[RMDB]
RNA sequence: GGGAACGACUCGAGUAGAGUCGAAAAGGCCAGGAAAUUAACUUUUAACCCUAACUUUGUGCUAUUUUGAGAUAAAAGAAAUGCACACCUCAGAACAGCAAGGUGUUACAGCACAUAACUGCCUGUACAAUUUAAAAACUCGAUAAACCCAAAGCUACAUUACGGACGUGUUCGCACGUCCGUAAUGAAAAGAAACAACAACAACAAC
Reactivity to 2A3 in 0.01 (KOAc 150mM, MgCl2 10mM, bicine 150mM(pH8.5), 24C), signal-to-noise 1, nucleotides 027 to 156: g000g000c080c000a000g020g020a000a120a180u180u110a190a200c020u000u000u090u300a090a080c000c020c010u100a150a050c170u280u080u030g000u000g020c050u120a180u000u040u000u040g160a180g020a050u120a170a110a000a000g140a000a000a000u240g000c000a000c000a020c030c000u060c060a100g000a300a050c020a140g160c050a100a000g010g000u020g000u090u070a000c000a000g080c100a000c000a060u280a070a050c020u020g000c020c010u000g000u020a120c080a160a150u000u070u210a110a280a000a000a000c040u020c040g010a000u120a070a100a070c060c000c100a000a190a000g050c060u010a020
Record summary:
The data come from the RNA Mapping Database (RMDB), library OK3TST. The record gives the reactivity of an RNA of 207 nucleotides to 2A3. For 2A3 the reverse transcriptase was SuperScript II with manganese. The RNA was probed in 150 mM KOAc, 10 mM MgCl2 and 150 mM bicine (pH 8.5) at 24 C.